[RMDB]
Chemical mapping of a 177-nucleotide RNA with 2A3.
Source: RMDB library OK1LIB, as collected in RNAgym.
For 2A3 the reverse transcriptase was SuperScript II with manganese.
Conditions: 150 mM KOAc, 10 mM MgCl2 and 150 mM bicine (pH 8.5), 24 C.
RNA sequence: GGGAACGACUCGAGUAGAGUCGAAAAGAUCGCGAGCAACCCCGAGCGGGCCGCCGUGUACUUCCAGGAGCAGCCCUACAUCACCGAGUGGUUCACCAGCGAGCAGGUCGCCGAGGUCCGCGAGAAGCUUGUUCGGUCGAUUCGUCGACCGAACAAGAAAAGAAACAACAACAACAAC
Reactivity to 2A3 in 0.01 (KOAc 150mM, MgCl2 10mM, bicine 150mM(pH8.5), 24C), signal-to-noise 2, nucleotides 027 to 126: g040a070u090c070g050c080g010a000g000c010a030a040c000c000c000c000g020a010g040c010g000g060g050c000c020g020c010c010g110u060g050u070a090c060u120u110c020c010a030g000g090a080g040c030a030g020c030c000c000u080a110c010a090u080c000a010c090c000g000a030g040u000g050g070u150u030c160a150c060c000a040g040c010g020a040g010c090a070g020g030u050c000g000c040c060g000a010g000g000u070c000c020g090c010g000a070g030a050a000g100